[RMDB]
RNA sequence: GGGAACGACUCGAGUAGAGUCGAAAACUGCGCGUGUUGCAGGAGGGUGGGUGAUGGUCUCGAUCUCUUGUAUUUAGAGAUGGGUUGCCCUUGGUUAGGCAGGUUGUGUAUUCUCUGGGGGCGCGUGCGAUAUAUAAAUAUUCGUAUUUAUAUAUCGAAAAGAAACAACAACAACAAC
Reactivity to 2A3 in 0.01 (KOAc 150mM, MgCl2 10mM, bicine 150mM(pH8.5), 24C), signal-to-noise 2, nucleotides 027 to 126: c010u030g020c020g000c020g050u120g030u070u110g000c030a020g020g020a050g020g000g020u200g010g000g000u020g040a090u100g070g030u040c000u030c060g050a030u000c000u000c000u000u090g070u110a180u130u300u100a030g000a000g020a010u020g020g040g010u000u150g030c020c000c000u020u110g140g000u190u100a110g010g000c020a020g050g000u020u000g000u000g020u040a210u130u010c040u000c000u030g020g000g020g000g020c020g000c000g020u010g040